[RMDB]
RNA sequence: GGGAACGACUCGAGUAGAGUCGAAAAGAUAUGGAACCUUACCUAGCGAUGAAAUCGGAAACGAUGGAGCUAAGUAAUCUGGUUCCUAAGUCAAAUCGUUAGUAGAUGUUCGCAUCUACUAACGAAACUGUUUGCAUGACUUCGGUCAUGCAAACAGAAAAGAAACAACAACAACAAC
Reactivity to 2A3 in 0.01 (KOAc 150mM, MgCl2 10mM, bicine 150mM(pH8.5), 24C), signal-to-noise 1, nucleotides 027 to 126: g040a040u080a030u080g010g010a010a000c000c000u010u000a000c000c000u000a000g020c000g300a300u040g000a040a010a080u010c020g000g050a070a020a000c030g000a000u010g020g010a000g000c010u010a010a010g030u100a000a110u070c270u110g000g000u020u020c000c000u030a110a010g030u040c050a040a030a250u010c000g000u000u000a000g000u010a000g000a010u020g070u040u110c300g060c100a000u000c000u010a000c000u000a000a000c000g010a020a000a000
Reactivity to DMS in 0.01 (KOAc 150mM, MgCl2 10mM, bicine 150mM(pH8.5), 24C), signal-to-noise 1, nucleotides 027 to 126: g000a040u000a300u000g010g000a000a010c000c000u000u010a010c000c000u000a000g020c000g000a100u040g000a110a130a000u000c000g050g010a230a060a150c000g000a000u000g000g000a070g010c000u000a000a040g000u000a020a020u000c170u030g030g000u000u000c000c000u010a020a080g030u000c050a140a040a100u000c000g000u000u000a010g020u000a030g000a000u000g000u000u000c230g020c010a020u000c010u000a000c000u000a000a000c000g030a000a050a090